[RMDB]
RNA sequence: GGGAACGACUCGAGUAGAGUCGAAAAGCGUGCUUGCCAAUUCUUAUCAGAACAAGGUUAUGAGGUUAUCGAUGUCCAAGGUGGCAUGAUGUCCUUUGAAGAACUUUAAAAAUUUGCAUUUCUCCUACUAUUACUUGGCGUUCGCGCCAAGUAAUAGAAAAGAAACAACAACAACAAC
Reactivity to 2A3 in 0.01 (KOAc 150mM, MgCl2 10mM, bicine 150mM(pH8.5), 24C), signal-to-noise 2, nucleotides 027 to 126: g040c000g020u030g000c010u020u020g010c010c010a060a050u030u020c030u030u190a150u150c020a050g000a070a030c040a110a050g000g030u020u030a030u060g010a020g030g040u060u050a000u010c060g060a010u060g000u000c010c020a220a070g170g060u210g020g050c020a010u000g010a010u020g020u040c000c000u060u000u000g070a040a020g040a040a030c000u060u080u130a060a180a010a130a150u040u120u120g030c010a020u020u050u010c010u020c020c000u010a040
Reactivity to DMS in 0.01 (KOAc 150mM, MgCl2 10mM, bicine 150mM(pH8.5), 24C), signal-to-noise 1, nucleotides 027 to 126: g020c200g040u000g020c070u020u000g050c070c050a050a080u000u000c010u010u010a070u030c130a080g000a080a040c270a070a010g020g020u000u000a020u000g000a050g000g000u000u000a020u030c020g010a010u000g000u000c010c030a120a150g020g030u010g010g010c000a000u000g000a010u000g000u000c000c010u000u000u000g020a070a100g000a030a040c040u000u010u010a030a060a100a070a140u000u000u000g000c070a030u000u000u000c040u000c040c090u010a190
Notes:
Chemical mapping of a 177-nucleotide RNA with 2A3 and DMS. For 2A3, 1,114 sequencing reads were counted. The reactions ran in a buffer of 150 mM KOAc, 10 mM MgCl2 and 150 mM bicine (pH 8.5), at 24 C. For DMS the reverse transcriptase was MarathonRT. For 2A3 the reverse transcriptase was SuperScript II with manganese.